[RMDB]
RNA sequence: GGGAACGACUCGAGUAGAGUCGAAAAAGGACCGAUUGGGUGAUGUUUUAGCUACAGCGCAACGUAUACGUCGACGAUACAACAAGAACGGUUCAUCGGAGCCUCGACUAAAGACGCUUGACGGACACACGACUAUAGUAUUCGUACUAUAGUCGUGAAAAGAAACAACAACAACAAC
Reactivity to DMS in 0.01 (KOAc 150mM, MgCl2 10mM, bicine 150mM(pH8.5), 24C), signal-to-noise 9, nucleotides 027 to 126: a090g000g010a110c020c020g010a120u000u000g010g000g010u010g010a070u000g010u000u000u000u000a090g000c050u000a070c150a060g020c070g020c050a080a080c070g010u000a070u000a080c120g010u000c030g000a080c090g000a090u010a060c140a070a090c160a060a090g000a090a080c120g010g000u000u000c050a090u000c070g000g010a110g010c030c040u000c030g010a090c080u000a040a060a100g000a070c070g010c060u000u000g010a050c040g000g000a120c170a230
Reactivity to 2A3 in 0.01 (KOAc 150mM, MgCl2 10mM, bicine 150mM(pH8.5), 24C), signal-to-noise 6, nucleotides 027 to 126: a000g060g020a050c040c020g100a160u070u100g060g000g070u060g030a100u070g110u040u050u040u090a030g000c020u060a060c050a060g000c020g010c090a030a020c040g050u100a050u030a090c060g040u030c030g030a050c020g020a040u050a170c040a100a000c020a150a010g050a140a020c030g040g030u060u050c040a050u110c110g090g000a030g010c010c020u030c020g050a040c020u090a110a040a070g040a000c010g020c040u030u060g030a030c010g040g010a010c030a000
An RNA of 177 nucleotides, treated with DMS and 2A3 and read out base by base.
Reactivities are given for positions 27 through 126.
The data come from the RNA Mapping Database (RMDB), library OK2TST.
For DMS, 16,390 sequencing reads were counted.
The RNA was probed in 150 mM KOAc, 10 mM MgCl2 and 150 mM bicine (pH 8.5) at 24 C.